[RMDB]
RNA sequence: GGGAACGACUCGAGUAGAGUCGAAAAUGUGAAAUGUGCGUGCCUGCGAGGAAUCUAUGUGAAAAGGCGUCCUCCCGCUCCGUGACUUGUUGGGAUGUAUGCGUGAGUGAGGGGCUGAGUGUGGUGUGAGGGCUGUCUCCUGUGUCCCUGGUGGAGAUCCCUGGAUUUAUUUCGAUAAAUCCAGGGAAAAAGAAACAACAACAACAAC
Reactivity to 2A3 in 0.01 (KOAc 150mM, MgCl2 10mM, bicine 150mM(pH8.5), 24C), signal-to-noise 2, nucleotides 027 to 156: u200g050u030g050a090a040a040u180g020u050g020c030g000u020g000c070c050u010g000c060g050a100g020g050a040a030u080c070u120a060u220g110u050g060a010a090a080a040g030g030c040g030u060c020c020u060c050c000c000g030c000u040c010c020g030u020g060a090c040u060u050g030u060u080g140g000g020a020u040g020u110a060u130g050c000g010u050g000a020g000u040g020a130g000g000g010g000c020u020g010a020g000u080g000u060g000g020u000g020u040g050a110g000g040g020c040u000g050u020c000u020c010c020u090g040u040g000u090c000c000c010u040g020g000u010g050g050a070g040a030
Reactivity to DMS in 0.01 (KOAc 150mM, MgCl2 10mM, bicine 150mM(pH8.5), 24C), signal-to-noise 1, nucleotides 027 to 156: u010g020u010g020a060a140a140u010g050u010g030c010g060u010g030c030c000u000g000c070g000a100g010g010a060a110u020c030u010a090u000g050u000g010a090a080a090a110g020g010c080g020u010c010c020u000c030c020c010g010c020u000c030c030g000u000g000a070c070u000u000g010u000u000g010g010g010a080u000g000u000a080u000g020c060g000u000g110a080g000u020g000a030g020g010g000g060c040u010g010a100g030u000g060u010g000g020u000g010u000g000a040g010g000g000c000u000g020u010c020u010c040c010u000g010u000g010u000c000c000c030u000g020g030u010g000g010a170g010a180